The data come from the RNA Mapping Database (RMDB), library RFM100. This 177-nucleotide RNA was probed chemically with DMS and 2A3. The RNA was probed in 150 mM KOAc, 10 mM MgCl2 and 150 mM bicine (pH 8.5) at 24 C. For 2A3 the reverse transcriptase was SuperScript II with manganese. For 2A3, 1,317 sequencing reads were counted.
RNA sequence: GGGAACGACUCGAGUAGAGUCGAAAAUUACAUACUUCAUCUGGGAGACUUUACAUAUGUGAUAUUUAUGAUCUUGUUAGACUGGUAAUUACAAAGUGCCCUAGGAGGCUAGGAGGACUGACCAAGAAUGGUAAGAAACCUUCGGGUUUCUUACCAUAAAAGAAACAACAACAACAAC
Reactivity to DMS in 0.01 (KOAc 150mM, MgCl2 10mM, bicine 150mM(pH8.5), 24C), signal-to-noise 2, nucleotides 027 to 126: u000u000a090c170a090u010a060c060u010u000c040a140u000c090u010g010g000g020a070g000a060c090u000u050u040a100c150a070u010a080u040g000u000g000a080u030a060u020u020u000a060u020g000a090u000c040u000u010g050u030u000a050g000a020c090u020g000g000u000a050a040u010u030a090c130a040a030a070g010u000g010c020c010c000u030a080g000g000a080g000g010c110u000a010g020g080a070g000g010a060c060u000g000a090c030c030a090a060g040a130
Reactivity to 2A3 in 0.01 (KOAc 150mM, MgCl2 10mM, bicine 150mM(pH8.5), 24C), signal-to-noise 2, nucleotides 027 to 126: u130u040a020c020a030u130a040c070u010u080c010a050u010c020u030g110g070g000a050g050a040c060u120u120u050a110c070a090u200a130u110g000u080g040a010u040a070u130u080u030a140u090g100a080u030c010u020u070g110u140u030a010g060a070c040u030g000g090u040a070a080u030u010a080c020a020a110a010g040u050g070c050c000c000u010a040g030g060a100g040g020c010u020a020g010g010a010g000g010a010c020u040g050a090c000c000a020a000g050a080